[RMDB]
RNA sequence: GGGAACGACUCGAGUAGAGUCGAAAAUUGCUGACUUGCAAGACCGUGCCUGUGCCAGUAGAUGGAAUUGGAGCAAUCUUACUCUGGUCCGUUGAUCGGUCGGGGCAUUCCAGUCCGAGGGUGUUUGAACAGGUAAGGACCAGUCGGGUUGCAGACGCGUGAGGAAUAGGUUCGCCUAUUCCUCACGAAAAGAAACAACAACAACAAC
Reactivity to DMS in 0.01 (KOAc 150mM, MgCl2 10mM, bicine 150mM(pH8.5), 24C), signal-to-noise 1, nucleotides 027 to 156: u000u000g030c020u000g030a050c120u000u000g060c080a130a100g030a120c050c050g050u030g020c010c000u030g030u000g020c020c020a070g020u000a140g000a200u000g010g010a060a070u000u020g000g000a140g000c000a060a090u000c070u000u000a090c020u000c010u000g030g000u000c000c040g040u000u000g010a100u000c030g040g020u000c020g060g000g000g010c000a030u000u000c000c040a100g000u000c090c040g020a140g020g020g050u000g030u000u020u000g020a140a040c000a020g030g000u010a130a140g070g000a020c010c000a050g020u000c050g030g050g050u000u000g020c000a030g010a110c090g000
Reactivity to 2A3 in 0.01 (KOAc 150mM, MgCl2 10mM, bicine 150mM(pH8.5), 24C), signal-to-noise 1, nucleotides 027 to 156: u080u040g030c040u060g060a150c060u060u050g070c060a130a010g020a030c010c010g000u030g000c000c000u030g040u110g000c000c000a020g050u070a020g060a160u100g100g010a040a090u010u190g080g020a070g030c020a000a030u020c000u040u040a020c020u020c000u060g050g000u030c010c020g030u120u240g130a070u090c010g010g000u000c050g000g000g000g000c070a130u140u080c050c000a000g110u000c000c020g010a040g030g000g020u070g090u020u070u070g080a050a050c040a010g030g010u060a060a100g000g020a010c000c000a020g000u000c030g000g000g000u020u040g010c020a000g040a060c010g050